[RMDB]
RNA sequence: GGGAACGACUCGAGUAGAGUCGAAAAGCGACGAACCCGAAGGCCUGGUUGCGUGGUAUCGCGAUGCCAUUGCGACCAAUGGAGUGACGGAUGUGCUUCUGUUUGGCGACUGCCGUGCGAUCCACAAAUUUAAAAUAGCAUUCGUGCUAUUUUAAAUAAAAGAAACAACAACAACAAC
Reactivity to 2A3 in 0.01 (KOAc 150mM, MgCl2 10mM, bicine 150mM(pH8.5), 24C), signal-to-noise 9, nucleotides 027 to 126: g040c040g130a090c020g030a090a090c010c000c010g010a040a020g110g020c010c040u030g010g000u010u010g010c000g000u000g000g000u030a020u080c060g020c120g150a020u040g000c000c020a030u070u300g000c010g010a010c000c000a000a060u090g010g000a050g020u050g050a020c020g030g030a060u100g030u050g060c000u040u030c030u080g180u040u090u080g040g000c020g040a210c060u030g000c010c010g000u020g000c010g020a030u020c010c010a080c040a080a170
Reactivity to DMS in 0.01 (KOAc 150mM, MgCl2 10mM, bicine 150mM(pH8.5), 24C), signal-to-noise 9, nucleotides 027 to 126: g020c090g010a070c080g010a100a110c050c010c010g010a160a140g010g010c030c040u000g000g010u000u000g020c020g020u000g000g020u000a020u000c120g030c250g010a090u000g010c010c010a020u000u010g040c010g010a020c010c010a030a050u010g010g010a060g010u000g010a260c150g000g010a090u010g010u000g010c030u000u000c050u000g010u000u000u000g010g010c020g010a100c070u000g010c040c040g010u000g010c030g000a070u000c010c020a080c200a060a080